[RMDB]
RNA sequence: GGGAACGACUCGAGUAGAGUCGAAAAUAAGAGCCUAAACCCCUCUCAAAGGAAAGCGAUAGCUAAGGCUUUAGGUAGUGAAGACUUCUUCCUUAUCCACGGCCCCUUUGGAACUGGAAAGACGAGGACUGUUCUAGUUGUUCGCAACUAGAACAGUAAAAGAAACAACAACAACAAC
Reactivity to DMS in 0.01 (KOAc 150mM, MgCl2 10mM, bicine 150mM(pH8.5), 24C), signal-to-noise 3, nucleotides 027 to 126: u030a100a080g010a120g020c020c020u020a060a080a230c050c040c060c060u010c020u000c050a040a040a040g010g010a100a120a040g000c050g000a170u020a100g020c040u010a090a100g010g010c120u000u000u000a100g010g000u000a040g030u000g020a070a050g000a230c180u000u010c010u000u000c020c030u000u020a060u000c020c050a060c190g000g010c020c020c010c020u000u000u040g000g010a060a090c070u020g010g010a040a070a100g010a070c100g010a100g010g010
Reactivity to 2A3 in 0.01 (KOAc 150mM, MgCl2 10mM, bicine 150mM(pH8.5), 24C), signal-to-noise 1, nucleotides 027 to 126: u100a050a040g020a010g060c020c020u050a170a110a080c000c000c040c030u000c000u000c020a020a050a040g010g000a160a050a000g030c020g060a140u200a070g020c060u080a100a100g000g030c000u010u020u080a000g020g000u040a070g000u030g180a060a070g030a160c040u200u040c010u020u000c090c010u040u020a010u000c000c000a010c030g010g000c040c000c000c000u010u020u050g000g080a060a030c070u040g040g060a150a130a000g030a020c070g030a020g100g000
The record gives the reactivity of an RNA of 177 nucleotides to DMS and 2A3. DMS adducts were read by reverse transcription with MarathonRT. 2A3 adducts were read by reverse transcription with SuperScript II with manganese. The 2A3 profile rests on 1,367 reads.